[RMDB]
RNA sequence: GGGAACGACUCGAGUAGAGUCGAAAAGUCAUGCCUUCGGGCAUGACAGGUACCGAGAGGUACCAAAUAGCGUACAGGAGACUCAGACUGUACGCUAAAAAAGUGUGUGUUCAAUAAGCCCCAAUUGAACACACACUAAAAUGGGGCAAGAGUGUCACAGGACGCAUUUAUUCGUAAAUGCGUCCUGAAAAGAAACAACAACAACAAC
Reactivity to 2A3 in 0.01 (KOAc 150mM, MgCl2 10mM, bicine 150mM(pH8.5), 24C), signal-to-noise 1, nucleotides 027 to 156: g020u000c010a000u000g000c000c010u020u110c250g070g000g000c000a010u000g000a000c000a000g000g010u020a000c000c020g050a040g000a020g030g000u000a000c000c010a000a040a030u040a000g000c040g000u000a000c000a000g050g060a150g140a180c080u060c090a050g010a100c000u000g000u000a000c010g000c000u010a000a030a000a000a050a070g000u000g000u010g000u010g000u000u000c010a030a020u120a170a120g000c000c000c010c020a050a050u010u010g000a000a010c000a000c000a000c000a000c000u020a000a000a000a030u260g010g000g020g000c060a080a030g080a040g050u100g040u130c040a000